Chemical mapping of a 177-nucleotide RNA with DMS and 2A3. High 2A3 reactivity points to a flexible backbone, as in loops and unpaired stretches. The data come from the RNA Mapping Database (RMDB), library OK1LIB. DMS adducts were read by reverse transcription with MarathonRT.
RNA sequence: GGGAACGACUCGAGUAGAGUCGAAAAGCGGAAAGGAGUGCGUGGUAGCACAAACCAUACCAAUCCGCGGCACAAGGUCGCACAUGCACAGCUUCGCCUGUGCAAAGCGAACAAGGCGAAUAAAGAACCUAUGGCCCAUGUUCGCAUGGGCCAUAGGAAAAGAAACAACAACAACAAC
Reactivity to DMS in 0.01 (KOAc 150mM, MgCl2 10mM, bicine 150mM(pH8.5), 24C), signal-to-noise 2, nucleotides 027 to 126: g050c010g030g010a000a040a300g040g000a190g030u030g000c120g020u000g030g000u050a030g040c010a090c230a070a040a060c090c120a200u040a190c000c040a050a210u000c000c000g060c010g000g090c000a030c060a050a300g030g000u000c000g000c000a040c290a180u000g020c030a000c000a000g000c000u080u000c250g000c260c000u020g000u000g000c020a000a090a000g000c010g020a020a000c000a100a300g020g010c000g000a030a120u100a020a040a100g000a070a270
Reactivity to 2A3 in 0.01 (KOAc 150mM, MgCl2 10mM, bicine 150mM(pH8.5), 24C), signal-to-noise 2, nucleotides 027 to 126: g000c010g000g010a000a000a000g000g000a100g020u140g040c190g050u090g080g140u230a050g070c050a020c010a130a000a030c060c020a070u220a040c010c010a030a020u000c000c040g000c000g000g000c090a100c000a230a000g100g070u000c030g000c000a030c000a240u000g000c000a000c000a020g020c000u080u050c050g050c010c010u000g000u000g040c040a020a000a000g000c000g000a040a000c000a000a000g000g000c010g040a000a090u260a080a140a030g090a010a000